Chemical mapping of a 177-nucleotide RNA with DMS. Source: RMDB library OK2TRN, as collected in RNAgym. The reactions ran in a buffer of 150 mM KOAc, 10 mM MgCl2 and 150 mM bicine (pH 8.5), at 24 C. For DMS, 1,041 sequencing reads were counted. In probing experiments dimethyl sulfate is read out at A N1 and C N3, which are open when not base-paired.

RNA sequence: GGGAACGACUCGAGUAGAGUCGAAAAAAGCCCCCCAAGGGUGUGCUCUCAACAUUGUCAAGCUCUUUCCCCCCCAUUGUACAGAAUCUCCAUCUGUUUUCUCUGUCAGGUGCUGGAAACGUGCGUACCUUAAGGGUCAAUUCGUUGACCCUUAAGGAAAAGAAACAACAACAACAAC
Reactivity to DMS in 0.01 (KOAc 150mM, MgCl2 10mM, bicine 150mM(pH8.5), 24C), signal-to-noise 1, nucleotides 027 to 126: a100a190g030c000c000c010c050c060c030a010a060g010g020g010u010g050u000g000c060u000c080u000c050a060a080c100a080u020u010g030u010c040a110a070g000c040u010c050u000u000u000c010c000c000c020c010c010c000a070u000u000g030u010a070c040a070g020a060a040u020c030u000c180c020a100u010c020u010g000u000u010u020u000c030u000c040u010g020u000c050a060g000g000u000g030c030u000g000g000a040a060a120c110g010u000g010c050g000u010a100